[RMDB]
RNA sequence: GGGAACGACUCGAGUAGAGUCGAAAACAGUCCAUUUAAAGAGAUAUGGCGGGCAAAGCCUGUAGGUCAAGACACUCGCUGAUCCUAUAUGAGCUUAUUUAACUGAAUAGGCCAGAGGUGUACAACACAGUAAAUUGUCGUUCGCGACAAUUUACUGAAAAGAAACAACAACAACAAC
Reactivity to DMS in 0.01 (KOAc 150mM, MgCl2 10mM, bicine 150mM(pH8.5), 24C), signal-to-noise 2, nucleotides 027 to 126: c180a160g020u000c000c040a070u000u030u000a060a190a120g010a110g010a130u000a050u000g020g020c050g040g000g020c060a110a080a140g010c000c010u010g010u000a060g010g000u000c070a060a110g010a110c120a060c030u020c080g040c020u000g000a040u000c000c020u040a100u000a060u000g000a150g030c030u000u000a060u000u000u010a090a050c180u000g000a010a010u000a050g000g000c180c030a060g010a140g000g020u000g000u020a060c090a050a060c130a180
Reactivity to 2A3 in 0.01 (KOAc 150mM, MgCl2 10mM, bicine 150mM(pH8.5), 24C), signal-to-noise 1, nucleotides 027 to 126: c010a030g090u020c020c020a030u100u080u140a180a180a020g100a000g000a040u050a090u210g040g050c030g000g010g000c070a080a000a030g050c000c040u000g100u140a070g000g030u080c060a120a000g020a030c040a020c040u020c040g020c050u030g040a020u040c030c020u010a060u030a110u160g010a050g000c000u050u050a030u090u170u000a130a070c020u010g040a030a010u020a000g000g030c000c030a000g000a000g100g070u080g000u090a090c050a130a010c060a000
The record gives the reactivity of an RNA of 177 nucleotides to DMS and 2A3. Conditions: 150 mM KOAc, 10 mM MgCl2 and 150 mM bicine (pH 8.5), 24 C. For 2A3 the reverse transcriptase was SuperScript II with manganese. For DMS the reverse transcriptase was MarathonRT. The data come from the RNA Mapping Database (RMDB), library OK2TRN. The DMS profile rests on 1,118 reads.